[RMDB]
RNA sequence: GGGAACGACUCGAGUAGAGUCGAAAAUGGUUGGGGUCACGCUUCGGAGAACCCGAAGCUUCCCCAGUCUCUUGCUGACAACGGGAUUGAGUUCAUCGGACCCACAAGCCCUGUGAUGGCUGCGUUGCCGCACAACUUCGUUCGCGAAGUUGUGCGGAAAAGAAACAACAACAACAAC
Reactivity to DMS in 0.01 (KOAc 150mM, MgCl2 10mM, bicine 150mM(pH8.5), 24C), signal-to-noise 1, nucleotides 027 to 126: u010g020g010u000u000g030g000g000g010u010c200a070c160g030c010u000u000c040g020g010a150g010a260a300c110c000c010g090a010a030g000c000u000u000c000c000c000c000a000g000u000c020u000c120u000u000g010c080u030g030a100c110a080a100c080g020g000g000a190u000u000g000a100g020u000u000c040a070u000c150g010g010a150c010c010c040a120c230a040a060g010c000c040c030u000g010u000g010a080u010g000g000c000u000g000c100g010u000u000g030